[RMDB]
RNA sequence: GGGAACGACUCGAGUAGAGUCGAAAAAUUUAUGCCUAAACCAGCCAAUAUCAAAGUAAAUGGGCAUACAUACCAUGCUUUGUCAUGCCAGUCAUUCAGCUCCAUGAGCUAGGCAGGGUCUACCUGACUUAUAUGUCUUCUUCGGAAGACAUAUAAGAAAAGAAACAACAACAACAAC
Reactivity to 2A3 in 0.01 (KOAc 150mM, MgCl2 10mM, bicine 150mM(pH8.5), 24C), signal-to-noise 7, nucleotides 027 to 126: a000u110u100u040a070u060g000c000c000u080a180a110a060c030c020a020g100c040c020a130a070u140a080u270c060a150a110a050g030u070a070a160a110u090g020g010g000c010a010u040a050c040a020u110a040c010c010a020u040g010c010u020u070u040g020u070c010a010u030g030c040c020a020g040u090c020a090u220u050c030a030g020c010u000c040c010a060u110g010a040g070c020u030a020g030g010c010a020g010g010g000u000c020u050a060c010c010u020g040a060
Reactivity to DMS in 0.01 (KOAc 150mM, MgCl2 10mM, bicine 150mM(pH8.5), 24C), signal-to-noise 9, nucleotides 027 to 126: a080u010u000u000a030u010g010c000c010u000a050a100a110c090c070a120g000c080c070a080a090u000a100u000c130a070a080a080g010u010a030a100a080u000g000g000g010c030a040u000a040c190a060u000a100c030c020a050u000g000c020u000u000u000g010u010c050a040u000g000c080c040a040g000u000c060a100u000u010c170a090g010c020u000c070c050a060u010g000a050g020c050u000a020g000g020c030a040g000g010g000u010c100u000a110c030c020u000g000a170
Structure probing data (2A3 and DMS) for a 177-nucleotide construct. The DMS profile rests on 13,961 reads. The reactions ran in a buffer of 150 mM KOAc, 10 mM MgCl2 and 150 mM bicine (pH 8.5), at 24 C. It was measured as part of the RMDB library OK2TRN. The 2A3 profile rests on 12,862 reads.